[RMDB]
RNA sequence: GGGAACGACUCGAGUAGAGUCGAAAAGUAGUGUAUGUUUAGUAGGACAUGGAGCUGCGUGUAGUGAGUGCCAAGGUGUUAUCCCUUGGGUGUUAGACUCGGCUACUCUGACAGCCUGAAGGGAUGACCGCGGUACUAGGUUCGCCUGGUGUCGCGGAAAAGAAACAACAACAACAAC
Reactivity to 2A3 in 0.01 (KOAc 150mM, MgCl2 10mM, bicine 150mM(pH8.5), 24C), signal-to-noise 9, nucleotides 027 to 126: g070u100a010g010u010g020u030a060u060g030u010u050u040a130g030u030a040g040g070a010c010a040u070g060g040a070g020c020u030g010c040g030u040g010u030a050g030u030g080a010g010u030g060c000c010a010a010g030g000u050g030u130u120a040u060c000c000c000u000u000g020g000g000u030g040u030u060a020g010a010c010u000c050g040g000c020u030a020c010u000c020u030g030a070c000a030g160c000c000u050g090a040a030g030g000g000a020u050g030a020
Reactivity to DMS in 0.01 (KOAc 150mM, MgCl2 10mM, bicine 150mM(pH8.5), 24C), signal-to-noise 9, nucleotides 027 to 126: g010u010a050g010u010g010u010a030u010g010u000u000u000a090g010u020a080g010g000a070c060a050u020g010g000a120g010c020u010g010c060g000u000g010u000a020g020u000g000a030g010u000g000c020c020a010a050g000g010u010g020u030u040a110u030c160c000c000u000u000g000g000g010u010g010u030u030a100g000a020c030u010c040g000g010c020u010a030c070u000c020u010g010a100c020a020g010c010c010u010g010a060a060g010g000g000a060u010g000a200